The record gives the reactivity of an RNA of 177 nucleotides to 2A3. Conditions: 150 mM KOAc, 10 mM MgCl2 and 150 mM bicine (pH 8.5), 24 C. 2A3 adducts were read by reverse transcription with SuperScript II with manganese.
[RMDB]
RNA sequence: GGGAACGACUCGAGUAGAGUCGAAAACUGGCAUGAUGAUGAUAAUUACGAUUGAUUUUGUAUGAUUAUUCAUAUGAUUAAUACAAUCCUCCUACUCAUUCUGAAAAGAUUCGUCUUCGGACGAAUCGAGUCUAGUUCCGUUCGCGGAACUAGACUCAAAAGAAACAACAACAACAAC
Reactivity to 2A3 in 0.01 (KOAc 150mM, MgCl2 10mM, bicine 150mM(pH8.5), 24C), signal-to-noise 1, nucleotides 027 to 126: c030u040g070g000c040a020u070g030a010u010g000a000u000g030a040u100a160a080u140u060a090c080g030a010u040u030g010a010u000u000u100u010g010u010a000u000g000a030u150u110a030u300u220c010a010u010a020u090g030a040u170u060a170a050u100a120c010a020a010u030c000c030u030c020c020u010a030c010u060c070a080u140u000c000u100g050a030a060a020a030g000a020u000u000c010g000u000c000u010u040c240g010g010a010c020g000a000a000u000c000